Structure probing data (2A3 and DMS) for a 177-nucleotide construct. The reactions ran in a buffer of 150 mM KOAc, 10 mM MgCl2 and 150 mM bicine (pH 8.5), at 24 C. For 2A3 the reverse transcriptase was SuperScript II with manganese. For DMS the reverse transcriptase was MarathonRT. The DMS profile rests on 630 reads.
RNA sequence: GGGAACGACUCGAGUAGAGUCGAAAACUAACGACGAAUCACGCAAUACAUUCAAAGUUCGUUCGCAAGUGAUGUCAGGUAUUCGCCGCUUCAUGGUGGAAAAAGGCUUCAUGGAAGUCGAAACUCCCCUCACUCAGCGAUUCGUCGCUGAGUGAGGAAAAGAAACAACAACAACAAC
Reactivity to 2A3 in 0.01 (KOAc 150mM, MgCl2 10mM, bicine 150mM(pH8.5), 24C), signal-to-noise 2, nucleotides 027 to 126: c010u030a070a000c020g010a000c000g030a060a020u080c030a030c070g060c050a030a140u060a180c040a100u040u260c060a120a110a010g060u050u010c000g000u070u070c040g070c050a100a000g000u050g040a010u040g040u090c010a010g080g080u020a130u030u080c060g000c040c030g040c040u090u160c100a090u300g080g000u000g000g000a000a060a000a000a000g010g010c000u050u030c000a120u150g040g200a070a000g020u000c020g000a000a090a090c020u010c040c000
Reactivity to DMS in 0.01 (KOAc 150mM, MgCl2 10mM, bicine 150mM(pH8.5), 24C), signal-to-noise 1, nucleotides 027 to 126: c040u000a040a140c100g000a060c030g010a090a010u000c090a050c130g030c080a130a090u020a000c050a120u020u000c020a120a160a070g000u000u000c080g010u000u020c080g080c120a180a140g020u000g000a000u000g000u000c000a000g000g000u000a020u000u040c030g040c030c000g010c200u010u000c290a090u000g000g000u000g000g000a000a050a060a100a190g000g030c000u000u000c000a190u000g020g010a030a020g010u000c000g000a060a090a030c200u000c000c020